[RMDB]
The data come from the RNA Mapping Database (RMDB), library OK2TRN.
Chemical mapping of a 177-nucleotide RNA with DMS and 2A3.

RNA sequence: GGGAACGACUCGAGUAGAGUCGAAAAAUCUACCUGGUGUGUGCUAAGAGUUCGGUGCCGUGAAAAUCCUGUCAGCCUGAUCUCUUCUUGCGUUCGGGAUGAUACGGGAGAUGCUAGUAAUCAAUGAGUUUAACACCAAUUUCGAUUGGUGUUAAACAAAAGAAACAACAACAACAAC
Reactivity to DMS in 0.01 (KOAc 150mM, MgCl2 10mM, bicine 150mM(pH8.5), 24C), signal-to-noise 6, nucleotides 027 to 126: a070u010c060u000a100c040c020u010g020g010u010g030u000g010u000g010c050u010a100a110g010a110g010u000u000c050g010g030u010g020c040c030g000u000g000a060a060a080a120u000c030c020u000g010u000c020a070g020c010c020u000g010a030u000c030u000c050u000u010c170u010u000g010c080g010u000u000c030g020g000g010a040u000g000a080u000a040c100g010g010g000a060g000a070u010g020c050u000a070g020u010a090a070u000c090a080a090u010g010a270
Reactivity to 2A3 in 0.01 (KOAc 150mM, MgCl2 10mM, bicine 150mM(pH8.5), 24C), signal-to-noise 2, nucleotides 027 to 126: a000u030c040u080a090c010c020u010g010g010u050g010u010g010u030g010c010u050a100a000g010a040g050u080u050c020g010g010u030g000c020c010g010u070g050a060a040a000a050u060c010c010u040g020u020c010a010g040c000c000u010g020a030u000c050u020c020u210u010c080u100u120g010c010g020u050u030c000g020g000g000a030u030g010a030u060a130c070g020g050g000a040g000a000u100g010c060u050a040g070u140a110a110u090c100a070a210u120g030a030
Overview
The DMS profile rests on 10,093 reads.